[RMDB]
RNA sequence: GGGAACGACUCGAGUAGAGUCGAAAAGAACGCCUGGUCUGGAGCUGAGGACUCGGGAAACCAUGCAGUUGAGGCGAGCCUUGGGCUGCUUUAGAGGCGCUGAUAUUCGAGGAGGCUUCUCCUGGAAAUCUAAGGUUGACUUCGGUCAACCUUAGAUAAAAGAAACAACAACAACAAC
Reactivity to DMS in 0.01 (KOAc 150mM, MgCl2 10mM, bicine 150mM(pH8.5), 24C), signal-to-noise 1, nucleotides 027 to 126: g030a080a160c090g010c030c040u000g010g020u000c110u000g000g000a040g020c010u000g000a060g000g000a110c010u000c000g000g020g000a210a080a050c010c060a090u010g020c100a120g000u000u000g020a300g000g000c030g010a050g010c020c010u000u000g010g030g020c000u000g000c020u000u020u040a130g000a060g010g000c020g000c030u010g000a160u000a060u040u000c020g000a020g010g010a100g000g000c170u030u030c000u000c000c000u000g000g000a070a060
Reactivity to 2A3 in 0.01 (KOAc 150mM, MgCl2 10mM, bicine 150mM(pH8.5), 24C), signal-to-noise 5, nucleotides 027 to 126: g050a070a030c000g020c010c040u080g010g080u040c070u040g060g040a040g010c010u010g040a020g050g110a250c000u020c050g070g000g030a040a030a030c040c000a110u260g020c100a040g040u080u080g070a040g050g140c030g030a040g020c010c000u020u040g140g040g000c020u060g070c000u110u080u090a110g000a020g090g010c040g000c070u050g050a050u030a100u100u120c040g020a020g010g010a020g030g090c060u090u020c020u100c010c000u030g040g030a110a110